[RMDB]
RNA sequence: GGGAACGACUCGAGUAGAGUCGAAAAGCAUAAUAACCUGCGCUGAGCCCUUCUCCCCCAGCUUGCCUGUGUCCUAGGGAAUUGGAAGGUCAUCCUUCACAGGAUCGUGUGGAAGUCCUGCUCGGGGUCCAAACAUGGUAAUUCGUUACCAUGUUAAGUUUAAUUCAAUGUUCGCAUUGAAUUAAACAAAAGAAACAACAACAACAAC
Reactivity to DMS in 0.01 (KOAc 150mM, MgCl2 10mM, bicine 150mM(pH8.5), 24C), signal-to-noise 3, nucleotides 027 to 156: g000c020a040u010a090a110u000a080a110c030c020u000g010c050g020c040u010g010a120g000c030c000c010u010u000c040u010c020c010c010c030c030a110g050c050u000u010g000c030c040u020g020u000g020u000c040c020u010a100g010g010g010a080a130u000u000g020g000a050a070g020g020u000c050a110u000c030c020u000u000c070a060c060a030g020g010a050u000c080g000u000g030u010g020g000a140a120g010u000c030c020u000g020c050u010c080g030g020g050g010u000c030c040a100a030a000c000a010u000g000g020u010a020a070u000u010c280g010u010u000a010c000c000a010u000g000u000u000a020a090
Reactivity to 2A3 in 0.01 (KOAc 150mM, MgCl2 10mM, bicine 150mM(pH8.5), 24C), signal-to-noise 5, nucleotides 027 to 156: g000c010a000u050a100a050u100a210a200c020c020u060g020c050g000c060u060g050a050g020c010c030c000u090u030c130u090c010c000c000c000c000a010g000c010u040u090g030c000c000u050g020u020g030u080c010c030u030a060g020g020g040a060a070u110u080g070g020a030a020g020g000u090c030a110u120c010c000u020u050c030a020c000a040g000g040a030u070c050g000u070g020u030g110g010a050a040g020u030c010c010u020g010c000u030c030g010g000g020g010u000c030c030a050a010a000c000a000u000g000g010u010a010a010u030u020c040g030u020u010a000c000c000a000u000g000u000u010a020a000